Source: RMDB library TTRINS, as collected in RNAgym. An RNA of 177 nucleotides, treated with DMS and read out base by base.

RNA sequence: GGGAACGACUCGAGUAGAGUCGAAAAGAUAUGGACGAUAGAAGAGGCUAGUUUUUCCAGGAUCCCUAUGUCGGAAACGACAUAGAACUCCUGGAAAAACUAGAACUACCUCCUAUCGUCCUAAGUCCUAAGACAAGUAGUUCGCUACUUGUCUUAGAAAAGAAACAACAACAACAAC
Reactivity to DMS in 0.01 (KOAc 150mM, MgCl2 10mM, bicine 150mM(pH8.5), 24C), signal-to-noise 6, nucleotides 027 to 126: g000a120u010a250u000g000g000a010c000g020a020u000a010g020a130a100g020a070g000g010c000u000a010g010u000u000u000u010u000c000c000a010g000g000a010u000c110c140c000u000a000u000g010u000c000g000g000a130a120a270c000g020a000c000a010u000a000g000a170a090c120u000c000c000u000g010g000a000a000a000a010a000c000u000a000g000a030a040c090u000a300c060c000u000c000c000u000a010u000c000g010u000c000c000u000a010a080g000u000c030

Values cover nucleotides 27 to 126.